Conditions: 150 mM KOAc, 10 mM MgCl2 and 150 mM bicine (pH 8.5), 24 C. The record gives the reactivity of an RNA of 177 nucleotides to 2A3 and DMS. Values cover nucleotides 27 to 126. DMS adducts were read by reverse transcription with MarathonRT.
RNA sequence: GGGAACGACUCGAGUAGAGUCGAAAAAAGCAAACUUGUAUGCUUCAAAAUUGCCUGCGAGUUGAGAAAACUCGGCGAAGUCCUCAGCUUUUGGCUUGAACUGUACAGAUGACGUGUUACUAGGUGCAUAUGGAACAAAGUUCGCUUUGUUCCAUAUAAAAGAAACAACAACAACAAC
Reactivity to 2A3 in 0.01 (KOAc 150mM, MgCl2 10mM, bicine 150mM(pH8.5), 24C), signal-to-noise 3, nucleotides 027 to 126: a010a000g060c060a090a060a040c030u060u040g010u070a040u040g020c000u000u020c010a090a100a120a290u130u130g010c000c010u030g050c080g030a010g000u010u070g020a040g070a010a120a020a010c020u020c040g060g010c070g060a050a010g030u030c010c020u000c020a000g000c010u080u080u090u090g000g010c000u010u060g020a030a010c010u050g000u060a010c010a030g050a110u050g030a050c050g090u070g020u080u050a080c070u080a050g150g000u040g000c010
Reactivity to DMS in 0.01 (KOAc 150mM, MgCl2 10mM, bicine 150mM(pH8.5), 24C), signal-to-noise 7, nucleotides 027 to 126: a060a050g010c020a050a110a080c090u010u000g010u000a050u000g010c150u000u000c060a040a060a130a120u010u010g010c010c010u000g010c140g010a020g010u000u000g010a100g000a090a070a050a020c010u000c020g010g010c110g020a060a100g000u000c050c020u000c040a040g010c040u000u000u000u010g000g010c030u000u000g010a030a050c060u000g010u000a030c050a050g000a080u000g000a110c140g010u000g000u000u010a080c060u000a080g020g010u000g010c160